This 307-nucleotide RNA was probed chemically with DMS and 2A3.
2A3 adducts were read by reverse transcription with SuperScript II with manganese.
The DMS profile rests on 2,850 reads.
Values are in units of 0.01, from 0 to 300, in steps of 10.
The 2A3 profile rests on 2,621 reads.
Source: RMDB library POS240, as collected in RNAgym.
For DMS the reverse transcriptase was MarathonRT.

RNA sequence: GGGAACGACUCGAGUAGAGUCGAAAAGAUGCCUUCGUGAGAAGGCAUCAGUCUAAUCGUGAGAUUAGACAACUAGUGCGUGAGCACUAGAAGAGGUGUCGUACGCGACACCUCAACUUGAGAACUUCGGUUCUCAAGAAGAAUCUUACUUCGGUAAGAUUCAAGAUUCCGUUCGCGGAAUCACCGUAACCGGUGACGGUUACGGAUUUAAACUGUUGAGAGGUGCCUGGAGCGCCUGCAGGCAUCUCUGUUUAUAAUGCAGGCAUACCUACGAGUUCGCUCGUAGGAAAAGAAACAACAACAACAAC
Reactivity to DMS in 0.01 (KOAc 150mM, MgCl2 10mM, bicine 150mM(pH8.5), 24C), signal-to-noise 1, nucleotides 027 to 266: g000a030u010g000c010c010u010u000c010g010u030g000a260g000a000a000g030g000c000a000u000c000a090g000u000c000u000a010a000u010c000g000u020g010a130g000a030u010u000a000g000a010c010a120a250c000u000a000g020u000g010c000g000u020g000a230g020c000a020c010u010a000g010a150a190g000a020g000g010u000g020u000c000g030u020a100c200g020c000g000a000c000a020c000c010u010c010a010a050c020u020u000g010a010g000a000a000c000u000u020c230g040g020u000u000c000u000c000a000a000g000a240a150g010a020a010u000c000u000u020a010c000u010u000c150g040g000u000a000a010g020a010u000u010c010a140a140g010a020u020u000c010c000g000u000u000c230g000c030g000g040a020a000u010c020a090c000c030g010u010a000a010c020c000g000g000u000g000a050c000g000g000u000u000a000c010g000g010a020u030u020u000a050a110a140c080u000g000u010u010g000a040g000a000g000g020u000g020c000c020u000g020g020a170g000c220g020c120c030u000g020c000a000g000g000c020a000u010c000u000c010u000g000u040u010u040a080u020a090a080u000g010c070a040g020g000c150a060u020a130
Reactivity to 2A3 in 0.01 (KOAc 150mM, MgCl2 10mM, bicine 150mM(pH8.5), 24C), signal-to-noise 2, nucleotides 027 to 266: g000a000u000g000c000c000u000u000c010g050u120g100a220g000a020a020g010g000c010a000u000c000a000g000u040c000u000a000a000u000c010g030u030g110a080g000a030u000u000a000g000a000c000a000a080c000u010a000g000u010g010c020g050u070g060a030g000c000a000c010u000a000g020a080a070g040a000g000g000u010g000u000c000g000u010a050c300g030c010g150a000c000a000c010c010u000c000a000a040c010u000u000g000a000g000a000a000c000u060u090c240g140g020u010u000c000u010c000a000a000g000a010a030g010a000a000u000c000u010u000a000c000u010u040c160g110g010u000a000a000g010a000u000u010c010a000a030g000a000u000u010c010c020g000u010u040c260g040c020g120g000a000a000u000c010a010c010c000g000u000a000a000c000c000g010g030u010g130a030c000g000g010u010u000a000c000g010g000a000u000u030u020a070a050a050c050u070g130u270u260g290a110g020a070g040g060u030g000c050c030u100g160g090a230g220c070g020c050c010u010g000c040a000g000g000c020a010u000c000u000c000u000g010u010u120u040a300u070a240a210u300g090c020a010g030g000c000a010u020a110